Chemical mapping of a 207-nucleotide RNA with 2A3 and DMS.
For 2A3 the reverse transcriptase was SuperScript II with manganese.
The 2A3 profile rests on 2,737 reads.
Values cover nucleotides 27 to 156.
For DMS the reverse transcriptase was MarathonRT.
The reactions ran in a buffer of 150 mM KOAc, 10 mM MgCl2 and 150 mM bicine (pH 8.5), at 24 C.

[RMDB]
RNA sequence: GGGAACGACUCGAGUAGAGUCGAAAAUACAAAUUUAUGAACAUGAAUUUGCUUGCUUAAAUCUGCACCAUAUCGGAUUGUAAAAUCGGUUGGUAUGCAUUUAUAAUUUACGAUAUUGGUAUCAUUUAUAGUUACUUCGUAUUUGGUUUUACGUAUAAUUCGAUGAACUAUUCGUAGUUCAUCGAAUAAAAGAAACAACAACAACAAC
Reactivity to 2A3 in 0.01 (KOAc 150mM, MgCl2 10mM, bicine 150mM(pH8.5), 24C), signal-to-noise 4, nucleotides 027 to 156: u150a000c010a010a030a000u040u100u050a090u130g090a120a020c020a070u050g010a040a050u040u020u070g020c050u070u060g020c010u070u070a080a120a120u120c030u080g010c030a000c000c000a020u030a010u140c020g080g020a020u000u090g030u100a050a080a040a080u050c030g040g000u020u060g050g000u110a060u080g020c010a010u030u050u040a150u030a050a030u030u030u070a050c010g010a010u020a070u120u160g010g020u020a010u080c020a040u050u180u180a190u090a110g040u010u040a040c010u030u060c050g000u040a070u050u060u050g060g010u030u050u050u090a040c040g070u090a060u060a180
Reactivity to DMS in 0.01 (KOAc 150mM, MgCl2 10mM, bicine 150mM(pH8.5), 24C), signal-to-noise 2, nucleotides 027 to 156: u000a050c000a020a030a060u010u000u000a020u020g000a140a190c160a110u000g010a020a030u000u010u000g020c040u000u000g000c070u010u010a020a050a070u000c050u000g010c090a120c010c030a050u000a020u000c030g060g020a030u010u000g000u000a060a040a030a060u000c030g020g030u000u010g020g060u010a060u000g020c030a140u000u000u000a030u000a060a040u000u000u000a140c010g020a090u000a080u000u000g010g010u000a100u010c040a070u000u000u010a100u000a130g030u000u000a040c050u000u000c030g000u000a040u000u000u000g040g010u000u000u000u000a050c070g030u000a060u000a100